[RMDB]
RNA sequence: GGGAACGACUCGAGUAGAGUCGAAAACUCUGUGCAGACCCGCGCCACGCUGGAGCUGCGGGGCAUCGAGGCCAAGGUGGGCGCGUCGAUGGCGUGCGCGAUUGGCAACAUGGAGGGCCUCACGCGCCGUGAUGAGCGCAUUCGUGCGCUCAUCACGAAAAGAAACAACAACAACAAC
Reactivity to 2A3 in 0.01 (KOAc 150mM, MgCl2 10mM, bicine 150mM(pH8.5), 24C), signal-to-noise 1, nucleotides 027 to 126: c000u000c000u000g030u040g050c020a050g030a240c000c010c010g030c000g000c020c030a180c100g170c160u200g020g020a100g030c000u000g010c150g050g000g000g000c000a030u010c040g020a020g060g060c050c000a050a040g170g040u160g040g090g000c070g000c010g080u060c050g170a110u220g050g000c090g050u060g040c070g000c010g030a080u060u060g080g000c000a050a000c010a040u040g070g100a070g050g160g000c010c030u010c000a100c050g000c010g030c020
Reactivity to DMS in 0.01 (KOAc 150mM, MgCl2 10mM, bicine 150mM(pH8.5), 24C), signal-to-noise 2, nucleotides 027 to 126: c010u000c020u020g010u000g020c070a160g000a300c000c000c070g000c000g050c080c000a160c260g030c180u000g010g010a100g020c020u010g010c000g040g000g000g000c060a050u000c230g000a080g030g020c010c030a050a060g010g040u010g000g050g010c050g020c030g020u000c060g000a030u000g030g020c000g040u000g000c090g020c050g000a200u000u010g020g000c050a060a110c040a100u040g000g000a190g000g030g010c030c010u000c050a050c070g030c060g000c050
The record gives the reactivity of an RNA of 177 nucleotides to 2A3 and DMS. The DMS profile rests on 999 reads. Source: RMDB library OK2TRN, as collected in RNAgym. DMS adducts were read by reverse transcription with MarathonRT. Reactivities are given for positions 27 through 126.